[RMDB]
RNA sequence: GGGAACGACUCGAGUAGAGUCGAAAAGUAUCAGCGGAGGCAACAUUGGUCAGGGUAAUCGCACCAGUAGAGUCAUGUGACCACAGAGUUUGUGUGACCGCAUCACCAUUGAUCUUCAGAGUACCAGCCAAGUAACGACGUUCGCGUCGUUACUUGGAAAAGAAACAACAACAACAAC
Reactivity to 2A3 in 0.01 (KOAc 150mM, MgCl2 10mM, bicine 150mM(pH8.5), 24C), signal-to-noise 1, nucleotides 027 to 126: g020u020a040u060c010a030g010c040g020g050a000g060g090c000a030a030c030a080u020u090g030g020u050c020a050g170g000g030u090a100a040u090c070g040c050a020c040c000a020g050u070a030g040a030g050u050c020a060u170g090u130g110a040c020c010a000c020a100g220a050g070u070u160u060g040u020g000u020g000a040c010c080g000c030a050u070c020a010c010c000a000u040u020g010a020u050c000u180u040c040a000g000a020g110u000a010c020c000a000g080
Reactivity to DMS in 0.01 (KOAc 150mM, MgCl2 10mM, bicine 150mM(pH8.5), 24C), signal-to-noise 1, nucleotides 027 to 126: g030u000a060u000c070a060g010c060g000g030a190g000g020c070a130a120c050a060u010u000g000g020u000c090a070g010g030g000u000a050a050u000c070g020c210a070c050c100a060g030u000a130g030a200g010u010c080a080u010g000u000g010a100c050c020a030c040a080g000a090g000u010u020u020g020u000g030u020g010a030c080c060g040c080a110u000c140a050c030c000a070u130u000g000a050u000c020u010u000c130a130g000a130g020u000a140c040c060a100g000